[RMDB]
RNA sequence: GGGAACGACUCGAGUAGAGUCGAAAAAAAGAUAUGGAGCCAUGUGGUACAGACAUGCUGGAGUAUGGGUCGGAAACGACCUGAAACAGCAACAGCUGUACGUAACAUCAUGGCUCCUAAGUCAAAACUUGAAGGUAUUCUUCGGAAUACCUUCAAGAAAAGAAACAACAACAACAAC
Reactivity to 2A3 in 0.01 (KOAc 150mM, MgCl2 10mM, bicine 150mM(pH8.5), 24C), signal-to-noise 2, nucleotides 027 to 126: a000a000a000g020a020u050a030u170g000g000a000g020c000c000a010u000g020u000g040g000u010a030c000a010g110a060c060a070u150g000c000u000g010g020a000g010u030a150u300g010g000g010u040c030g010g000a060a080a030c010g000a010c010c000u000g000a010a000a010c020a010g020c010a040a000c030a050g080c000u000g000u010a010c010g000u030a020a090c030a080u300c000a010u010g000g000c000u000c000c000u000a020a000g020u020c020a000a010a100a130
Reactivity to DMS in 0.01 (KOAc 150mM, MgCl2 10mM, bicine 150mM(pH8.5), 24C), signal-to-noise 3, nucleotides 027 to 126: a070a120a070g010a060u010a300u020g000g000a020g000c000c010a010u010g010u000g020g000u010a000c010a020g000a090c120a270u000g020c020u000g000g020a120g010u000a070u000g030g000g000u000c000g000g000a170a060a220c000g020a020c000c000u000g010a070a140a140c000a040g000c010a010a060c250a100g010c030u000g000u000a010c020g000u010a060a120c160a030u020c020a000u000g000g000c020u000c010c000u000a000a030g000u000c050a110a080a110a160